[RMDB]
RNA sequence: GGGAACGACUCGAGUAGAGUCGAAAAAUGUUGAUUUUCGGCAAAUUGCCAGUUUGCCGGAAAUUUUGAAUUCCAGAAAUUUGCCGGUUUGCCGAUUUGCUGGAAAUUUUGAUUUUGGGCAAACUGCAAUAUACGAGGGUUUCGACCCUCGUAUAUUAAAAGAAACAACAACAACAAC
Reactivity to 2A3 in 0.01 (KOAc 150mM, MgCl2 10mM, bicine 150mM(pH8.5), 24C), signal-to-noise 3, nucleotides 027 to 126: a000u180g070u100u060g000a060u010u000u020u020c000g010g030c010a020a030a080u130u140g150c050c060a050g030u000u000u010g000c010c000g020g010a010a000a000u080u040u030u160g090a030a040u060u030c030c020a000g070a000a060a000u140u120u090g070c070c010g030g030u060u070u050g010c000c000g070a060u020u040u120g070c030u010g030g070a080a130a090u230u230u110u150g130a140u050u110u090u110g120g010g000c010a000a000a010c000u030g010c020
Reactivity to DMS in 0.01 (KOAc 150mM, MgCl2 10mM, bicine 150mM(pH8.5), 24C), signal-to-noise 3, nucleotides 027 to 126: a070u030g010u030u010g000a040u010u000u000u000c000g010g010c020a010a020a030u010u030g020c300c300a150g000u010u010u000g000c000c000g000g000a000a000a000u010u010u030u020g010a120a080u000u000c020c020a080g020a090a090a050u020u020u030g000c090c110g020g000u000u020u010g010c030c000g010a080u000u010u010g000c030u010g000g000a040a040a060u000u030u040u040g000a070u010u010u010u010g020g010g010c000a010a010a030c000u010g000c080